[RMDB]
RNA sequence: GGGAACGACUCGAGUAGAGUCGAAAAGUGUCCUUCGGGACACCAUUACCGUAGGUCGUAGGUAGCCACAGCUAAGACAGUUGAAUUCGAAAGAGUUCAAUCGAGCUGUGGAACUACUACCCUACGACCUAAACGGGUCUAUCGGUUUCGACCGAAAGAGAAAAUUGUGAUUCGUCACAAUUUUCUCAAAAGAAACAACAACAACAAC
Reactivity to 2A3 in 0.01 (KOAc 150mM, MgCl2 10mM, bicine 150mM(pH8.5), 24C), signal-to-noise 5, nucleotides 027 to 156: g000u000g000u000c000c000u020u080c270g060g000g000a010c020a020c020c000a080u130u250a110c010c000g010u000a000g010g000u000c020g000u000a000g000g010u000a010g010c000c000a010c000a000g020c010u140a230a060g090a120c050a030g020u010u000g010a000a010u020u010c020g050a090a090a070g010a080g000u000u010c010a010a010u110c030g050a010g000c000u000g000u000g010g010a000a000c010u210a010c000u010a010c000c050c000u000a000c010g000a000c000c000u000a020a000a010c000g010g010g000u020c060u100a140u050c030g010g020u030u150u140c180g080a040c020c000g020a040a090a030
Reactivity to DMS in 0.01 (KOAc 150mM, MgCl2 10mM, bicine 150mM(pH8.5), 24C), signal-to-noise 2, nucleotides 027 to 156: g000u000g000u000c000c010u000u000c300g030g030g030a030c000a000c020c020a050u000u010a060c000c000g030u000a040g020g000u000c000g020u010a060g010g010u000a000g020c000c000a030c000a030g010c010u000a140a170g020a120c300a100g030u000u000g010a020a000u000u000c000g040a130a090a240g010a020g030u000u000c000a010a000u000c000g020a070g020c000u000g030u000g000g000a020a020c020u000a300c020u000a000c020c000c000u000a000c000g000a000c000c000u000a000a040a100c020g000g010g000u000c060u000a170u000c040g020g000u000u000u010c160g000a100c020c030g010a030a110a190